[RMDB]
RNA sequence: GGGAACGACUCGAGUAGAGUCGAAAAUUAUUGUGAUUUUCUAUCUGCGGAUAGUAAGUGUCACUACUUAGACCUUGUGUCUCCUCAUCUCAACUAAACGAAAUUUUAUCCAUCGCACACAUGUUCGAUAGCUCCACCGUUUCGACGGUGGAGCUAUAAAAGAAACAACAACAACAAC
Reactivity to 2A3 in 0.01 (KOAc 150mM, MgCl2 10mM, bicine 150mM(pH8.5), 24C), signal-to-noise 1, nucleotides 027 to 126: u120u060a070u090u060g000u000g000a000u070u000u000u000c000u000a000u000c030u000g070c160g070g000a000u000a000g060u120a060a040g070u140g000u050c000a000c030u040a000c000u140u050a040g030a020c000c000u000u050g030u000g000u140c000u000c080c000u040c040a080u030c000u000c000a090a180c010u000a080a130a130c040g210a060a070a070u030u060u010u110a040u090c000c020a000u090c010g000c070a000c000a000c000a140u080g000u010u000c030g030

Overview:
An RNA of 177 nucleotides, treated with 2A3 and read out base by base. 2A3 adducts were read by reverse transcription with SuperScript II with manganese. Reactivities are given for positions 27 through 126.